[RMDB]
RNA sequence: GGGAACGACUCGAGUAGAGUCGAAAAAUAAACAUGGUUACCAUAAACUAACCGUGAAGGUACCCAUGAACACGGUUAGUUAAAUAAAAGCUGAGCGUUAGGAAAAACCUAAUGCUCAGCAAAAAAACAGUCUAUGUUAGUUCGCUAACAUAGACUGAAAAGAAACAACAACAACAAC
Reactivity to DMS in 0.01 (KOAc 150mM, MgCl2 10mM, bicine 150mM(pH8.5), 24C), signal-to-noise 1, nucleotides 027 to 126: a130u020a040a050a140c110a020u000g000g000u000u000a150c080c030a130u000a100a040a030c000u020a030a000c020c040g020u000g000a100a050g020g010u000a090c110c040c070a140u030g000a100a110c050a020c030g000g000u000u000a010g000u000u000a000a010a050u000a030a090a130a080g010c000u000g010a010g070c000g010u000u020a000g030g000a170a200a070a060a030c000c000u000a000a020u000g010c000u000c010a030g030c000a000a000a040a050a020a030a030